[RMDB]
RNA sequence: GGGAACGACUCGAGUAGAGUCGAAAACAGUUUGUUCAUUGACUGUGGAGCCUGGAAAUGGAGGAGAAAGUAAAUUUGAUGAUUACUAAUACUUCGCUGUCUUUAGAGGACGCGGAGAUUGUGAGACUACUCUAUAUCCUUUCGAGGAUAUAGAGUAAAAAGAAACAACAACAACAAC
Reactivity to DMS in 0.01 (KOAc 150mM, MgCl2 10mM, bicine 150mM(pH8.5), 24C), signal-to-noise 9, nucleotides 027 to 126: c030a040g010u000u000u010g020u010u010c100a090u010u010g010a040c030u010g010u000g010g010a140g020c040c020u000g010g000a040a070a070u010g010g010a050g010g010a080g010a070a080a060g000u010a030a050a100u010u020u010g010a110u020g000a140u000u000a040c030u020a030a050u020a110c010u000u000c010g010c000u030g030u000c000u000u010u030a150g030a170g000g000a010c010g000c000g000g000a000g000a060u000u000g000u000g000a090g010a150c180
Reactivity to 2A3 in 0.01 (KOAc 150mM, MgCl2 10mM, bicine 150mM(pH8.5), 24C), signal-to-noise 9, nucleotides 027 to 126: c010a020g020u020u050u060g100u100u070c070a090u060u100g040a030c010u010g010u050g050g050a020g020c010c010u030g050g050a020a060a030u090g040g020a040g010g050a060g070a040a090a010g070u190a050a090a180u150u120u180g120a130u080g030a040u070u060a040c030u080a030a050u060a230c000u000u000c000g000c090u180g010u000c010u030u120u060a220g060a110g120g000a000c000g000c000g010g000a010g000a000u000u050g030u020g030a040g020a020c040
The record gives the reactivity of an RNA of 177 nucleotides to DMS and 2A3.
The RNA was probed in 150 mM KOAc, 10 mM MgCl2 and 150 mM bicine (pH 8.5) at 24 C.
It was measured as part of the RMDB libraries RFM100 and RFMREP.
For 2A3 the reverse transcriptase was SuperScript II with manganese.